[RMDB]
RNA sequence: GGGAACGACUCGAGUAGAGUCGAAAAUGGCACUGGCAGCCAUGCACUGUGUGGGAAAUGUGCCGGUCAUGCUGUGAGAGUGCACUGAUGACAGUGUGGGCAGUCACAAGUGCAAGUAAGGACCAUACCUAUCACGCCUGUUCGCAGGCGUGAUAGGAAAAGAAACAACAACAACAAC
Reactivity to DMS in 0.01 (KOAc 150mM, MgCl2 10mM, bicine 150mM(pH8.5), 24C), signal-to-noise 2, nucleotides 027 to 126: u020g030g030c000a010c010u000g000g000c010a060g000c040c010a080u000g020c030a040c010u000g000u000g060u000g030g060g000a070a140a140u000g000u000g000c030c030g010g000u020c000a040u000g030c170u020g010u000g000a080g010a200g030u020g020c030a020c000u000g020a200u000g000a010c030a060g000u000g010u000g000g000g030c030a110g020u000c000a090c210a180a040g010u010g010c000a040a090g000u030a060a070g000g010a190c000c020a160u050a120
Reactivity to 2A3 in 0.01 (KOAc 150mM, MgCl2 10mM, bicine 150mM(pH8.5), 24C), signal-to-noise 2, nucleotides 027 to 126: u020g080g000c000a010c030u010g030g000c000a030g040c000c020a110u020g000c010a010c040u060g020u050g040u160g140g140g070a020a070a180u160g010u050g000c010c040g000g040u000c010a020u140g130c070u150g040u040g050a070g000a040g100u240g050c060a010c000u060g080a160u170g010a000c040a010g020u030g020u100g030g040g000c000a000g000u030c020a020c010a100a010g040u020g000c010a030a000g070u070a100a020g010g040a000c050c000a010u080a140